[RMDB]
RNA sequence: GGGAACGACUCGAGUAGAGUCGAAAACGGCGGCCCAUAGAUCGGAGCCUGGCGACGUAAACCGUCGUGUCAUAUGUAAGCACCAGGUGCCAUCUCCGAGUCGAAUACCGCCGGGCACCGCGAUGGGUCUUCCGUUCCGCUUCGGUGGGACGGAAGAAAAAGAAACAACAACAACAAC
Reactivity to DMS in 0.01 (KOAc 150mM, MgCl2 10mM, bicine 150mM(pH8.5), 24C), signal-to-noise 7, nucleotides 027 to 126: c030g000g010c120g010g000c020c030c050a070u010a300g020a070u020c010g000g000a030g000c130c050u010g000g010c010g000a090c100g000u030a060a140a120c150c020g010u000c060g010u020g010u010c070a100u010a090u030g020u030a100a140g010c060a090c030c060a110g000g010u010g020c040c020a070u050c010u010c020c000g000a030g010u010c020g030a150a080u020a090c000c000g000c000c000g010g000g020c080a100c030c030g000c120g020a080u010g010g000g010
Reactivity to 2A3 in 0.01 (KOAc 150mM, MgCl2 10mM, bicine 150mM(pH8.5), 24C), signal-to-noise 8, nucleotides 027 to 126: c010g010g000c010g000g010c000c020c010a020u050a030g060a030u030c010g000g000a010g020c010c020u010g020g000c010g010a040c020g040u120a090a050a120c080c010g020u030c020g020u030g060u060c050a050u100a070u290g160u160a090a060g030c030a020c040c050a030g060g040u050g050c050c020a130u060c010u010c010c010g010a030g180u050c000g020a010a010u030a040c000c000g000c000c000g010g000g000c020a010c000c000g020c030g070a100u140g030g010g060
Overview: An RNA of 177 nucleotides, treated with DMS and 2A3 and read out base by base. Reactivities are given for positions 27 through 126. The DMS profile rests on 16,004 reads. The reactions ran in a buffer of 150 mM KOAc, 10 mM MgCl2 and 150 mM bicine (pH 8.5), at 24 C.